The data come from the RNA Mapping Database (RMDB), library OK1LIB. An RNA of 177 nucleotides, treated with DMS and 2A3 and read out base by base. Reactivities are given for positions 27 through 126. The RNA was probed in 150 mM KOAc, 10 mM MgCl2 and 150 mM bicine (pH 8.5) at 24 C. 2A3 adducts were read by reverse transcription with SuperScript II with manganese.
RNA sequence: GGGAACGACUCGAGUAGAGUCGAAAACAAGAAGAAGGACAUCGGGGACAUCCUCUGGCUGCACUACAAGAAGGCCAUGACCCUCCCAGAGGAGCCACUUCCCUUCUCAGAGGAUCUCUGGAGACUGCGGGGAGAAACAUUUCGAUGUUUCUCCCCGAAAAGAAACAACAACAACAAC
Reactivity to DMS in 0.01 (KOAc 150mM, MgCl2 10mM, bicine 150mM(pH8.5), 24C), signal-to-noise 2, nucleotides 027 to 126: c060a080a080g020a110a070g010a100a110g010g010a150c120a110u000c100g010g000g000g000a120c110a110u000c020c000u000c000u000g030g010c100u010g020c110a050c150u000a100c190a060a110g000a080a150g000g020c010c000a050u020g000a140c090c000c070u000c100c000c010a050g060a000g000g020a090g020c060c000a000c130u000u010c110c010c000u000u040c030u000c060a010g000a080g000g000a010u000c020u010c020u000g000g000a040g000a050c180u000g000
Reactivity to 2A3 in 0.01 (KOAc 150mM, MgCl2 10mM, bicine 150mM(pH8.5), 24C), signal-to-noise 3, nucleotides 027 to 126: c050a010a050g160a030a010g020a050a020g030g010a030c030a080u140c060g050g000g030g000a000c020a190u010c000c000u020c010u000g050g000c030u100g020c110a060c170u160a070c100a080a020g160a060a030g050g030c000c040a040u090g080a170c010c000c000u010c000c010c000a010g020a040g010g000a000g040c020c020a110c000u070u040c000c010c000u080u030c020u010c020a030g000a060g040g040a070u040c000u010c030u090g020g040a040g060a070c060u060g040